This 207-nucleotide RNA was probed chemically with 2A3.
RNA sequence: GGGAACGACUCGAGUAGAGUCGAAAACGCUGGGACUCUACCACAAACCGAUAAGUUCUGAAGCGCGCACGGAACUUUUGACGGUUGGUAUGAGUCCUGUGCUGAAGCGCGCACGGCAACCGAAAGGUGCGAAAACUGCGUUCGUUCGCGAACGCAGGCGCUGAUUAUACUUCGGUAUAAUCAGCGCAAAAGAAACAACAACAACAAC
Reactivity to 2A3 in 0.01 (KOAc 150mM, MgCl2 10mM, bicine 150mM(pH8.5), 24C), signal-to-noise 2, nucleotides 027 to 156: c010g010c010u030g000g000g000a000c000u000c000u000a000c000c000a000c110a120a230a000c030c000g060a230u040a250a000g010u000u000c010u030g050a170a070g000c000g000c010g010c010a010c000g000g000a010a000c010u050u080u150u300g300a230c110g010g010u080u090g020g000u040a100u300g000a010g000u030c000c000u000g000u010g000c010u040g050a120a030g000c000g000c010g000c000a000c010g030g000c010a010a030c020c000g070a060a040a020g010g010u020g010c010g050a100a060a000a060c010u000g010c000g000u000u000c010g020u020u070c240g000c020g150a000a000c000g000c000a000g020
The 2A3 profile rests on 1,249 reads. The RNA was probed in 150 mM KOAc, 10 mM MgCl2 and 150 mM bicine (pH 8.5) at 24 C.